[RMDB]
The record gives the reactivity of an RNA of 207 nucleotides to 2A3 and DMS. For DMS the reverse transcriptase was MarathonRT. Conditions: 150 mM KOAc, 10 mM MgCl2 and 150 mM bicine (pH 8.5), 24 C.

RNA sequence: GGGAACGACUCGAGUAGAGUCGAAAAGCCUGCCCCUGUCCGUCCCGACCAUGCGUGCCGCGUGACGCAGUAAUCCCCUUUACAGGAGCGCCCAUGACCACGGUGGCAGAGAUCAUCCGCGAUGCGUUCGGGCAUUUGCGCGUACUGGAUGCCAACGGCCUCACAUUAUUUUCGAAUAAUGUGAGGCAAAAGAAACAACAACAACAAC
Reactivity to 2A3 in 0.01 (KOAc 150mM, MgCl2 10mM, bicine 150mM(pH8.5), 24C), signal-to-noise 2, nucleotides 027 to 156: g010c040c000u020g020c010c000c000c000u020g030u080c000c020g020u000c000c010c010g020a030c000c030a050u090g030c000g100u120g090c090c020g080c020g050u070g040a000c010g020c140a000g030u190a050a300u090c070c000c000c040u100u150u050a030c030a010g030g000a070g050c000g000c000c000c000a020u050g110a060c050c060a070c140g020g000u020g010g000c080a060g020a050g000a040u140c000a010u160c030c030g000c010g010a010u040g000c020g030u030u030c040g080g050g000c040a000u050u030u150g040c000g040c040g070u080a090c010u190g010g000a040u040g010c010c000a020a000c030g090
Reactivity to DMS in 0.01 (KOAc 150mM, MgCl2 10mM, bicine 150mM(pH8.5), 24C), signal-to-noise 2, nucleotides 027 to 156: g000c050c020u000g020c030c000c010c000u000g030u000c030c040g030u020c020c030c010g030a100c040c060a100u000g000c100g010u000g050c010c070g160c050g040u010g020a030c050g040c030a140g030u000a070a140u000c010c000c020c040u010u010u000a210c090a060g020g020a170g010c070g040c010c020c010a100u010g000a070c000c020a060c040g010g020u010g020g060c010a110g000a190g020a100u000c060a070u000c000c010g040c020g030a080u000g020c070g050u000u000c090g060g010g020c020a080u000u010u000g030c000g000c030g030u000a150c090u000g010g000a140u000g000c030c020a060a210c240g030
The data come from the RNA Mapping Database (RMDB), library OK3TST.